[RMDB]
RNA sequence: GGGAACGACUCGAGUAGAGUCGAAAAUUUCUUCUAAUUGCUUUAACUGCGAUGCUGUUGCAAUUGAGUAUCUUACAUAGCCCUUCAUCACCGGCUCAUCAUAAAAGCGAGGUUUAAAUCCUUGUUCGAAUCCUCAUGAAUUCGUUCAUGAGGAUUCAAAAGAAACAACAACAACAAC
Reactivity to DMS in 0.01 (KOAc 150mM, MgCl2 10mM, bicine 150mM(pH8.5), 24C), signal-to-noise 3, nucleotides 027 to 126: u000u000u010c030u000u000c060u000a040a040u000u000g020c010u010u010u010a090a100c080u000g010c090g010a110u000g020c040u000g000u000u000g020c040a020a060u000u010g010a100g000u010a020u010c050u000u010a080c090a110u000a110g000c030c020c020u000u000c050a040u010c030a030c040c030g020g000c060u000c040a040u000c060a070u010a040a060a080a080g010c020g000a030g000g010u000u010u010a050a160a090u000c010c010u000u010g010u000u010c110
Reactivity to 2A3 in 0.01 (KOAc 150mM, MgCl2 10mM, bicine 150mM(pH8.5), 24C), signal-to-noise 1, nucleotides 027 to 126: u040u020u030c010u040u010c040u020a080a050u030u090g000c030u250u090u100a100a050c030u020g000c020g220a210u160g000c030u090g010u050u130g010c020a050a070u050u040g010a010g030u070a100u110c030u050u080a090c030a140u080a080g060c000c030c000u000u060c030a040u030c010a000c020c000g040g000c050u030c040a110u030c010a000u140a060a110a020a000g030c020g000a000g010g010u070u050u080a010a010a000u070c020c010u000u000g010u080u060c010